[RMDB]
RNA sequence: GGGAACGACUCGAGUAGAGUCGAAAAGGGGUGGUAAUGUCAGUCAAUUAAUGGGGUGAGGUUGAUACUUAUUUCAGAGUUUUGGGUUUCAAAUCUGAUCAAGGAAUGUUGCAACACUUUCUCAGGUCUCUGGACUUUUACAGUUUAUUUUAUAUCCAUAUUAAGUUACGUUCGCGUAACUUAAUAUAAAAGAAACAACAACAACAAC
Reactivity to 2A3 in 0.01 (KOAc 150mM, MgCl2 10mM, bicine 150mM(pH8.5), 24C), signal-to-noise 1, nucleotides 027 to 156: g010g010g020g030u050g040g040u070a030a050u050g040u100c020a000g020u000c020a000a090u070u190a020a080u130g050g000g030g030u060g070a030g000g030u020u050g000a050u030a030c020u060u130a130u090u080u090c020a060g010a080g090u020u020u040u140g050g000g000u030u060u000c040a090a090a050u020c000u060g030a030u070c020a020a020g030g030a070a030u080g030u030u020g030c030a090a000c010a030c030u060u060u020c070u030c020a020g000g090u000c040u020c030u110g110g000a050c010u110u110u060u100a130c040a000g040u000u050u100a080u090u060u080u070a110u120a050u200c040c040
Reactivity to DMS in 0.01 (KOAc 150mM, MgCl2 10mM, bicine 150mM(pH8.5), 24C), signal-to-noise 1, nucleotides 027 to 156: g010g020g000g060u010g020g020u000a010a070u000g000u000c080a060g030u000c040a060a120u020u000a070a070u010g040g000g040g000u010g010a090g020g020u000u010g000a080u020a060c050u000u000a070u000u000u010c060a070g020a120g000u000u000u000u000g020g020g040u010u000u010c080a060a050a130u010c040u010g010a040u000c100a060a080g000g010a070a110u000g010u000u000g000c040a100a100c060a060c070u000u000u000c030u010c040a130g030g010u000c040u000c070u000g020g020a070c020u000u000u000u000a070c010a090g000u010u000u000a040u020u020u010u010a080u010a140u020c030c040
An RNA of 207 nucleotides, treated with 2A3 and DMS and read out base by base. For 2A3, 591 sequencing reads were counted. Conditions: 150 mM KOAc, 10 mM MgCl2 and 150 mM bicine (pH 8.5), 24 C. It was measured as part of the RMDB library OK3TST.